[RMDB]
RNA sequence: GGGAACGACUCGAGUAGAGUCGAAAAUUUCAUCCUCGAGUCUCUUGAUGGUCUUUCUGGCCUUCCGGAGGUCUCUCUCGAGCUCCUCUGCCUUUCUUCUUGUGGAGAUCCACUUUUCGAGGAUUUCGUGGACAUCCCUUCGGGGAUGUCAAAAGAAACAACAACAACAAC
Reactivity to DMS in 0.01 (KOAc 150mM, MgCl2 10mM, bicine 150mM(pH8.5), 24C), signal-to-noise 3, nucleotides 027 to 129: u010u020u020c000a130u030c090c000u020c070g020a040g030u020c000u020c040u000u000g010a060u030g010g010u030c030u010u070u020c060u110g000g040c040c060u030u020c000c000g030g000a040g040g020u020c020u040c050u030c070u020c040g030a050g000c150u010c030c000u000c040u040g000c060c070u000u030u040c020u020u040c050u050u060g030u000g050g000a060g010a140u030c020c040a160c070u030u070u000u050c040g040a080g030g030a080u010u010u020c100g030u040g000
Reactivity to 2A3 in 0.01 (KOAc 150mM, MgCl2 10mM, bicine 150mM(pH8.5), 24C), signal-to-noise 5, nucleotides 027 to 129: u070u090u040c050a060u030c020c020u010c000g020a010g050u000c010u000c010u030u070g040a020u030g010g040u020c010u040u230u070c120u150g030g000c000c000u030u010c020c030g010g010a010g020g020u010c000u000c000u000c000u030c020g010a020g000c050u010c000c000u000c020u030g050c010c000u050u070u060c030u080u000c000u120u230g050u100g040g020a030g000a050u040c000c000a060c030u060u080u060u080c030g050a050g000g080a030u040u040u020c030g040u080g110